[RMDB]
An RNA of 177 nucleotides, treated with 2A3 and DMS and read out base by base. The DMS profile rests on 766 reads. Values cover nucleotides 27 to 126.
RNA sequence: GGGAACGACUCGAGUAGAGUCGAAAAGAUAUGGACCGGUUAGGGAGGUGUGUCGGAAACGACAUUAUCCAUCGAUCUAACAACGGUCCUAAGUCAAAACGUGAAGUGCGUUCGCGCACUUCACGAACCGCAUUUCAUGGUUCGCCAUGAAAUGCGGAAAAGAAACAACAACAACAAC
Reactivity to 2A3 in 0.01 (KOAc 150mM, MgCl2 10mM, bicine 150mM(pH8.5), 24C), signal-to-noise 1, nucleotides 027 to 126: g020a000u030a010u090g010g000a000c010c020g030g020u000u010a040g000g100g030a080g000g000u020g020u030g030u070c000g020g030a030a030a010c010g010a010c010a000u160u210a090u120c020c020a070u260c070g140a100u000c010u030a050a020c110a180a080c040g020g010u000c000c010u000a030a010g030u000c050a030a010a080a090c010g010u000g000a010a000g000u000g000c010g030u010u090c210g000c000g000c100a000c000u000u010c000a000c010g000a000a000
Reactivity to DMS in 0.01 (KOAc 150mM, MgCl2 10mM, bicine 150mM(pH8.5), 24C), signal-to-noise 1, nucleotides 027 to 126: g020a040u010a300u030g020g000a000c000c000g030g010u000u000a000g000g010g030a160g060g020u010g000u040g020u000c000g060g020a030a070a160c010g000a010c000a050u000u000a110u000c090c000a160u020c110g050a160u080c000u000a030a000c040a130a270c030g000g010u000c000c000u000a010a040g010u010c010a130a000a090a130c000g000u000g000a010a040g000u000g000c000g000u000u000c280g000c000g020c030a000c010u000u000c020a010c000g000a000a010